[RMDB]
RNA sequence: GGGAACGACUCGAGUAGAGUCGAAAAGCAAAUGUAUAAUCAAAGAACUUCACAAUAUUGUUGCCUAAGAAGCCUUUGAAUUCAAUAGUGUCAUUUCCAGCAAUUUGUUCGGCAACAAUACUUGCUGGGCUACACCAAUUUUCGAAUUGGUGUAGCCAAAAGAAACAACAACAACAAC
Reactivity to DMS in 0.01 (KOAc 150mM, MgCl2 10mM, bicine 150mM(pH8.5), 24C), signal-to-noise 1, nucleotides 027 to 126: g000c160a020a170a130u010g000u000a130u070a040a040u000c050a000a000a000g000a200a300c000u030u020c000a220c300a090a050u000a020u060u180g000u000u000g000c000c000u010a170a030g060a000a000g000c240c000u000u000u000g000a030a050u000u000c050a000a050u010a120g090u000g020u050c110a190u110u070u010c000c050a090g070c070a000a000u000u040u000g000u010u000c080g030g000c000a000a000c010a030a000u000a080c170u030u000g010c070u000g000
Reactivity to 2A3 in 0.01 (KOAc 150mM, MgCl2 10mM, bicine 150mM(pH8.5), 24C), signal-to-noise 3, nucleotides 027 to 126: g030c040a010a140a110u180g090u050a140u080a230a120u040c060a060a050a050g020a070a060c000u040u000c040a070c020a100a110u030a050u140u140g010u020u000g000c010c010u100a180a070g000a010a000g040c040c040u040u020u010g050a080a070u120u060c070a070a120u100a160g110u080g080u110c070a100u030u090u040c010c000a010g010c020a110a090u060u080u070g090u100u090c010g010g000c000a000a000c000a000a000u020a050c030u000u010g020c030u020g010
Description:
Structure probing data (DMS and 2A3) for a 177-nucleotide construct. For DMS, 831 sequencing reads were counted. For 2A3 the reverse transcriptase was SuperScript II with manganese. DMS adducts were read by reverse transcription with MarathonRT. The reactions ran in a buffer of 150 mM KOAc, 10 mM MgCl2 and 150 mM bicine (pH 8.5), at 24 C.